About this RNA: The data come from the RNA Mapping Database (RMDB), library OK1LIB. Structure probing data (2A3) for a 177-nucleotide construct. The reactions ran in a buffer of 150 mM KOAc, 10 mM MgCl2 and 150 mM bicine (pH 8.5), at 24 C.
[RMDB]
RNA sequence: GGGAACGACUCGAGUAGAGUCGAAAAUGUAACUUUGCUUUUAUUCCAUCAUAUUUUCUUUCUGCUUUUACGAUCUCUUCUCUUCUGAGCAGGUGAAGAAUUCUGUAAAUUCAAGUGUAAAUUAUAACGUGGCGUGAGUAUUCGUACUCACGCCACGAAAAGAAACAACAACAACAAC
Reactivity to 2A3 in 0.01 (KOAc 150mM, MgCl2 10mM, bicine 150mM(pH8.5), 24C), signal-to-noise 1, nucleotides 027 to 126: u250g070u280a210a120c080u230u110u110g050c030u080u150u110u080a120u080u140c010c000a020u000c020a060u140a100u050u050u000u060c080u070u080u000c020u010g120c000u060u000u060u000a110c050g000a080u040c080u040c000u250u000c000u000c000u000u020c090u160g080a120g070c110a000g000g020u000g050a000a000g000a000a000u040u110c110u100g030u030a020a020a020u050u000c000a070a020g020u000g020u110a030a120a150u300u040a070u150a250a000